An RNA of 177 nucleotides, treated with DMS and 2A3 and read out base by base. DMS adducts were read by reverse transcription with MarathonRT. Source: RMDB library OK2TST, as collected in RNAgym. The RNA was probed in 150 mM KOAc, 10 mM MgCl2 and 150 mM bicine (pH 8.5) at 24 C. In probing experiments dimethyl sulfate is read out at A N1 and C N3, which are open when not base-paired.
[RMDB]
RNA sequence: GGGAACGACUCGAGUAGAGUCGAAAAGUGAAUGUGAAAAAUGUGUAUAUUGGGAUGAUGUGUAUCGCAUGCAUUUAGCUAAUGUGGAUUCUACUUCUGUAUCCCAGCCAGAAGUAACUGACGAGGAAUGGACAACAUGGUUCGCCAUGUUGUCCAUAAAAGAAACAACAACAACAAC
Reactivity to DMS in 0.01 (KOAc 150mM, MgCl2 10mM, bicine 150mM(pH8.5), 24C), signal-to-noise 2, nucleotides 027 to 126: g030u020g020a050a030u000g000u000g010a040a070a060a130a040u000g000u010g010u000a060u010a080u000u000g010g020g020a110u010g000a040u000g010u010g010u000a080u000c050g000c030a030u000g040c000a060u000u000u000a080g010c040u020a060a100u010g010u000g020g000a090u010u010c050u000a010c010u000u000c010u000g010u000a070u000c000c000c000a070g020c200c000a000g000a020a020g000u010a030a140c140u000g000a090c110g020a150g010g000a100
Reactivity to 2A3 in 0.01 (KOAc 150mM, MgCl2 10mM, bicine 150mM(pH8.5), 24C), signal-to-noise 2, nucleotides 027 to 126: g090u020g050a040a050u090g020u060g070a140a000a000a050a090u130g010u000g100u050a010u020a040u210u130g100g120g000a060u110g020a040u060g130u000g020u100a020u130c020g000c020a010u030g010c020a030u050u030u040a070g050c010u040a040a130u100g030u060g170g000a040u050u030c020u020a010c000u000u010c000u000g010u020a080u000c020c000c040a000g010c030c020a020g010a010a000g000u010a030a030c030u030g120a010c060g000a040g030g120a070